[RMDB]
RNA sequence: GGGAACGACUCGAGUAGAGUCGAAAAGGCGAGCCUGUUGGUCUCCUACUUGGAAAGGUCUGCUGCUCCAACUCUAAGGUGUGCAGAGCUGAGGGGCCCUGUUUGGACACCGACAUUUCUUAGAAAAUUUGCCCUUGGCUGGGCAUGGUGGCUCAUACGUAAGAGAUCUAUUCGUAGAUCUCUUACGAAAAGAAACAACAACAACAAC
Reactivity to 2A3 in 0.01 (KOAc 150mM, MgCl2 10mM, bicine 150mM(pH8.5), 24C), signal-to-noise 5, nucleotides 027 to 156: g080g030c070g010a000g000c000c040u030g020u050u040g010g010u010c020u010c010c010u030a050c030u050u110g070g020a190a110a050g040g040u000c010u030g040c030u040g040c000u040c020c010a110a100c040u040c070u220a180a120g060g010u060g020u040g050c020a030g000a050g020c020u050g040a090g020g030g020g000c000c000c020u080g070u110u120u070g020g000a000c010a000c040c000g020a010c010a040u090u130u000c050u090u150a070g110a130a100a140a140u070u060u060g000c000c020c000u070u060g170g000c270u060g000g010g000c000a010u020g060g040u020g000g000c000u010c040a030u070a060
Reactivity to DMS in 0.01 (KOAc 150mM, MgCl2 10mM, bicine 150mM(pH8.5), 24C), signal-to-noise 3, nucleotides 027 to 156: g020g020c080g010a040g010c010c010u000g020u000u000g020g020u010c030u000c010c010u000a080c060u000u020g010g020a080a070a070g010g020u010c020u000g020c050u010g030c050u010c030c020a050a090c070u010c050u010a080a140g030g010u000g020u010g050c090a050g020a060g010c020u010g000a160g010g020g030g000c010c010c030u010g020u010u000u010g030g020a030c020a030c010c010g020a030c040a070u000u000u010c040u010u000a130g000a110a050a090a140u000u000u000g010c010c000c020u000u000g040g000c080u010g010g000g000c020a030u020g000g030u000g010g000c020u000c020a070u000a180

Structure probing data (2A3 and DMS) for a 207-nucleotide construct. DMS adducts were read by reverse transcription with MarathonRT. Reactivities are rounded to 0.1 and cut off at 0 and 3. The RNA was probed in 150 mM KOAc, 10 mM MgCl2 and 150 mM bicine (pH 8.5) at 24 C.